An RNA of 177 nucleotides, treated with DMS and read out base by base. Source: RMDB library TTRDES, as collected in RNAgym.
[RMDB]
RNA sequence: GGGAACGACUCGAGUAGAGUCGAAAAAAAAGAUAUGGAAUGAAUCUCUAGCGUGUUGCAUGGGAGUACGCUAUCGGAAACGAUAGUGAAACCAUGAACUACAAUCGGGUUCAUUCCUAAGUCAAAACAUAGGGGCUUAGUUCGCUAAGCCCCUAUGAAAAGAAACAACAACAACAAC
Reactivity to DMS in 0.01 (KOAc 150mM, MgCl2 10mM, bicine 150mM(pH8.5), 24C), signal-to-noise 2, nucleotides 027 to 126: a100a090a130a110g000a070u020a300u010g000g000a010a010u010g030a010a000u010c010u000c070u020a110g070c300g020u000g000u000u010g030c000a000u000g000g020g000a080g040u000a070c280g000c010u000a000u000c000g000g000a090a060a090c020g000a020u000a000g000u050g020a070a200a130c000c000a030u000g000a030a020c010u000a040c010a110a300u010c180g000g000g000u000u000c000a030u000u000c000c010u000a000a070g000u020c040a120a070a110a180